Chemical mapping of a 177-nucleotide RNA with DMS. Values cover nucleotides 27 to 126. The RNA was probed in 150 mM KOAc, 10 mM MgCl2 and 150 mM bicine (pH 8.5) at 24 C.
RNA sequence: GGGAACGACUCGAGUAGAGUCGAAAAGUUAUCUUGUGUGUAUGCUACAAUGUAGAAAAGUUUGGAAACCACUGAUUUGCAUAUGUAAAGAACAAGAAUUCUAGUUGGUACAAACAUUUAAAAGAUAAACCCAAAUCCUAUUCGUAGGAUUUGGGUUAAAAGAAACAACAACAACAAC
Reactivity to DMS in 0.01 (KOAc 150mM, MgCl2 10mM, bicine 150mM(pH8.5), 24C), signal-to-noise 2, nucleotides 027 to 126: g000u020u010a030u010c000u000u010g000u000g020u030g010u030a050u020g000c090u010a080c010a060a010u010g020u010a020g000a060a040a110a110g020u000u000u000g010g000a120a130a140c120c160a030c020u010g000a170u010u000u010g020c080a040u010a060u000g000u010a070a150a140g020a060a040c060a030a090g000a060a130u000u000c030u010a080g020u010u010g000g000u010a090c080a020a070a020c040a060u000u000u000a080a040a090a030g000a100u000a060